[RMDB]
The record gives the reactivity of an RNA of 207 nucleotides to 2A3. For 2A3, 660 sequencing reads were counted. It was measured as part of the RMDB library VIROID. The reactions ran in a buffer of 150 mM KOAc, 10 mM MgCl2 and 150 mM bicine (pH 8.5), at 24 C.
RNA sequence: GGGAACGACUCGAGUAGAGUCGAAAAAAAGGACGGUGGGGAGUGCCCAGCGCCCGACAGGAGUAAUUCCCGCCGAAACAGGGUUUUCACCCUUCCUUUCUUCGGGUGUCCUUCCUCGCGCCCGCAGGACCACCCCUCGCCCCCUUUGCGCUGUCGCGAUAUUUGAGCAGUUCGCUGCUCAAAUAUCAAAAGAAACAACAACAACAAC
Reactivity to 2A3 in 0.01 (KOAc 150mM, MgCl2 10mM, bicine 150mM(pH8.5), 24C), signal-to-noise 1, nucleotides 027 to 156: a000a000a000g030g000a020c070g030g010u020g010g040g020g010a000g020u040g000c000c030c000a070g020c030g030c070c020c000g030a030c180a030g000g020a010g010u080a060a020u130u050c000c010c020g010c030c000g000a000a030a030c300a080g030g030g000u080u110u240u280c160a040c000c000c000u000u020c010c000u020u020u000c010u070u040c010g010g000g010u010g020u000c000c000u020u030c000c030u030c000g010c030g010c010c060c020g020c010a030g010g010a020c100c000a010c000c010c000c000u030c010g000c030c000c000c000c050u010u100u070g070c130g050c120u160g070u210c020g010c070